[RMDB]
RNA sequence: GGGAACGACUCGAGUAGAGUCGAAAAACGUGCUGGCGUUACGACGCCAGCACGAAUGCACAAGUGAUGAACAGCAAAGGGACUUAAUACUGAAACCUGAUGUGAUAUUGUGAUGUCUGAUGUGCAACAGAUGCAUUCGGUUCGCCGAAUGCAUCUGAAAAGAAACAACAACAACAAC
Reactivity to 2A3 in 0.01 (KOAc 150mM, MgCl2 10mM, bicine 150mM(pH8.5), 24C), signal-to-noise 3, nucleotides 027 to 126: a000c010g020u000g030c010u000g000g040c040g000u000u000a050c300g010a000c000g100c050c000a000g000c000a000c000g000a010a000u040g000c000a000c000a050a000g120u040g210a070u000g010a020a010c020a030g000c010a000a000a110g000g000g050a050c030u170u120a160a100u150a300c090u150g130a150a130a100c000c000u000g000a060u010g090u000g060a100u060a150u300u190g070u040g050a240u050g000u000c040u030g050a070u070g030u030g000c030a030a010
Reactivity to DMS in 0.01 (KOAc 150mM, MgCl2 10mM, bicine 150mM(pH8.5), 24C), signal-to-noise 2, nucleotides 027 to 126: a040c010g130u000g050c020u000g060g070c000g010u000u000a120c210g020a030c030g070c000c010a020g030c000a000c040g000a010a080u000g000c010a010c020a040a160g010u030g000a040u000g000a190a050c000a220g000c030a000a070a210g000g010g010a090c060u000u030a110a090u030a110c290u030g010a040a070a140c020c010u020g000a300u010g010u010g040a090u010a090u040u030g000u000g000a150u060g010u000c010u010g000a190u000g000u000g040c030a030a280

The record gives the reactivity of an RNA of 177 nucleotides to 2A3 and DMS.